RNA sequence: GGGAACGACUCGAGUAGAGUCGAAAAUGGCCAACUGCCCAGUGGGGCAGAGUCUCACUGUUGCGGCCACACUGGACGGUACCCGGCAUCAAUGCACCACGGUUUUCGAACAUCAAGUAACGGAGAAAUACCCAAACUUUUUCGAAAGUUUGGGUAUAAAAGAAACAACAACAACAAC
Reactivity to DMS in 0.01 (KOAc 150mM, MgCl2 10mM, bicine 150mM(pH8.5), 24C), signal-to-noise 4, nucleotides 027 to 126: u020g010g020c020c030a160a120c040u000g000c010c030c010a150g030u010g000g010g010g000c000a040g000a080g000u000c040u000c100a120c140u000g010u000u010g010c050g010g010c000c010a040c050a050c040u000g000g000a040c040g020g000u000a060c110c050c100g000g030c020a090u000c090a070a060u010g000c040a050c030c030a070c080g010g000u020u000u000u000c050g000a060a100c090a060u010c070a050a080g010u010a050a050c070g000g000a190g010a060a090
Reactivity to 2A3 in 0.01 (KOAc 150mM, MgCl2 10mM, bicine 150mM(pH8.5), 24C), signal-to-noise 1, nucleotides 027 to 126: u020g060g040c010c010a040a000c010u010g030c000c000c010a070g100u080g070g030g050g000c050a020g050a030g110u010c020u010c060a120c090u160g120u190u100g030c020g070g000c080c000a000c000a000c000u040g000g000a000c020g010g050u060a050c020c010c060g040g010c040a030u060c100a040a140u080g010c000a010c000c000a020c030g040g000u050u000u160u090c030g030a090a050c010a060u100c010a070a100g060u040a080a020c010g010g030a080g060a100a160